[RMDB]
RNA sequence: GGGAACGACUCGAGUAGAGUCGAAAAAACAAUCCUUCAUCUGUAUAUGCAAUUAUACGAUAGCUAGUUUUUUGGUUAUUUGCCUAUAUAAUUGAAAGAAUGUUGGGGCUGCCGAUGAAAUCAGUCUAUAGGAAUACGAUUUCGAUCGUAUUCCUAUAAAAGAAACAACAACAACAAC
Reactivity to 2A3 in 0.01 (KOAc 150mM, MgCl2 10mM, bicine 150mM(pH8.5), 24C), signal-to-noise 5, nucleotides 027 to 126: a000a010c050a020a030u040c000c000u010u030c010a040u010c030u080g050u010a000u000a020u130g030c020a030a030u120u050a070u110a150c060g030a050u040a010g020c060u030a080g140u120u070u080u090u170u160g060g000u040u030a060u020u040u080g020c000c000u000a000u010a010u000a070a100u010u050g050a030a070a010g040a030a130u070g010u030u050g040g020g000g000c010u010g030c030c060g100a120u180g110a050a050a090u100c000a010g020u000c020u010
Reactivity to DMS in 0.01 (KOAc 150mM, MgCl2 10mM, bicine 150mM(pH8.5), 24C), signal-to-noise 4, nucleotides 027 to 126: a030a020c050a040a060u000c010c030u000u000c020a000u000c080u010g020u010a010u000a010u000g000c010a050a050u030u010a090u020a060c140g010a050u010a030g000c060u000a060g010u000u010u020u040u010u010g000g020u000u000a020u010u000u000g010c020c030u000a000u000a020u010a020a060u000u000g000a030a020a060g000a030a060u000g010u000u000g010g000g000g000c020u000g000c140c040g000a120u010g010a060a070a070u010c060a040g010u010c040u000
Chemical mapping of a 177-nucleotide RNA with 2A3 and DMS. The RNA was probed in 150 mM KOAc, 10 mM MgCl2 and 150 mM bicine (pH 8.5) at 24 C.